Structure probing data (2A3 and DMS) for a 177-nucleotide construct.
RNA sequence: GGGAACGACUCGAGUAGAGUCGAAAAACUGCCUCAGAUCAUAGAAGGCUCUCCUGAACUGCUAGUUAUAAAUCAUUUCUAUGGUUCAGAUUACAUAGAAUCAUUGGGUUUAAAGAACAUGCCUCUACUUUAAUGUGGGGUUCGCCCCACAUUAAAGAAAAGAAACAACAACAACAAC
Reactivity to 2A3 in 0.01 (KOAc 150mM, MgCl2 10mM, bicine 150mM(pH8.5), 24C), signal-to-noise 2, nucleotides 027 to 126: a000c030u070g010c020c020u020c040a090g040a220u120c020a090u100a120g160a140a050g190g010c020u000c010u010c050c000u050g030a100a090c020u070g000c040u020a010g000u020u080a050u070a170a190a060u050c060a060u020u030u030c030u040a010u060g000g030u080u030c030a030g020a170u070u140a030c010a090u130a050g050a070a000u000c000a060u010u110g090g000g040u010u070u080a090a080a010g050a020a030c020a020u070g040c020c000u070c000u080a110
Reactivity to DMS in 0.01 (KOAc 150mM, MgCl2 10mM, bicine 150mM(pH8.5), 24C), signal-to-noise 2, nucleotides 027 to 126: a060c210u020g000c040c020u000c070a100g000a190u000c140a150u000a130g010a090a090g040g020c010u000c050u000c020c020u000g010a080a110c090u000g010c050u000a090g010u020u000a050u010a040a070a070u010c060a100u030u010u010c020u000a030u000g010g010u000u000c090a100g010a200u020u000a120c090a060u010a020g010a020a030u010c110a080u000u000g010g000g030u000u010u000a030a060a110g010a030a060c060a060u010g010c000c100u000c050u010a090
It was measured as part of the RMDB library OK2TRN. The reactions ran in a buffer of 150 mM KOAc, 10 mM MgCl2 and 150 mM bicine (pH 8.5), at 24 C. For DMS the reverse transcriptase was MarathonRT. Values cover nucleotides 27 to 126. For DMS, 1,092 sequencing reads were counted.